[RMDB]
RNA sequence: GGGAACGACUCGAGUAGAGUCGAAAAUUGAAAUUGAACCGUCCUGUCAUCGAAAGAUAGGCAGAAGAUACGAAAUGUGUGACAGCAUGGGAAGUAAAGGCAGACCGUGGUUCCCUUGAGUAUCUUAAUUAGGGGGACGAGUUCGCUCGUCCCCCAACAUGAAAGUUAUCUUCGGAUAACUUUCAUGAAAAGAAACAACAACAACAAC
Reactivity to 2A3 in 0.01 (KOAc 150mM, MgCl2 10mM, bicine 150mM(pH8.5), 24C), signal-to-noise 4, nucleotides 027 to 156: u120u120g020a050a010a020u080u080g030a070a050c020c020g050u050c020c010u000g010u020c010a030u010c030g070a100a050a040g020a010u060a130g000g000c010a020g040a080a010g000a010u020a010c020g040a010a070a060u070g100u030g060u090g070a000c010a020g020c000a050u000g000g000g020a020a010g040u200a140a060a040g100g030c060a030g070a080c020c040g040u040g030g100u060u030c010c010c010u000u010g000a000g000u010a010u020c000u010u070a150a120u100u200a120g000g000g000g020g000a000c010g000a000g010u060u100c160g010c080u000c000g000u000c000c000c010c000c000a000a000
Reactivity to DMS in 0.01 (KOAc 150mM, MgCl2 10mM, bicine 150mM(pH8.5), 24C), signal-to-noise 4, nucleotides 027 to 156: u000u000g000a060a100a120u000u010g010a100a130c030c010g020u000c020c000u000g030u000c020a090u000c050g000a200a150a230g020a040u010a050g030g000c020a040g000a060a040g000a060u000a050c020g000a070a080a060u000g010u000g060u010g020a200c130a150g010c030a080u000g000g010g020a080a130g010u000a050a070a100g020g020c040a110g000a170c020c030g020u000g020g000u000u000c000c010c010u000u000g000a120g010u000a050u000c050u000u000a050a170u010u000a130g000g000g000g020g000a010c000g010a030g020u000u010c180g020c020u000c000g050u000c000c000c000c000c000a000a000